An RNA of 177 nucleotides, treated with 2A3 and read out base by base.
RNA sequence: GGGAACGACUCGAGUAGAGUCGAAAACCCUACACAGUGACUCCAGCUUGGGAGGGGCAGGGCUAGGCUGAGCCAGCACUCCCUGUGGUGUCUGCCUGCCACGUGCAGCUCUGGAGUUAGCCGUGGGCGACCUCACGGACUUCGGUCCGUGAGGUCGAAAAGAAACAACAACAACAAC
Reactivity to 2A3 in 0.01 (KOAc 150mM, MgCl2 10mM, bicine 150mM(pH8.5), 24C), signal-to-noise 2, nucleotides 027 to 126: c000c010c000u010a010c000a030c020a080g000u000g020a030c000u010c010c010a030g100c110u170u040g000g000g030a020g070g000g080g020c000a140g000g040g120c020u230a070g120g110c020u120g080a000g070c010c010a000g030c010a020c030u050c000c000c010u030g010u040g000g030u040g060u030c020u050g020c000c000u060g030c040c040a120c110g070u280g010c040a000g000c000u000c040u140g010g000a000g000u010u000a030g060c020c000g000u010g020g040g030
Annotation: The 2A3 profile rests on 652 reads. The reactions ran in a buffer of 150 mM KOAc, 10 mM MgCl2 and 150 mM bicine (pH 8.5), at 24 C. The data come from the RNA Mapping Database (RMDB), library RFM100.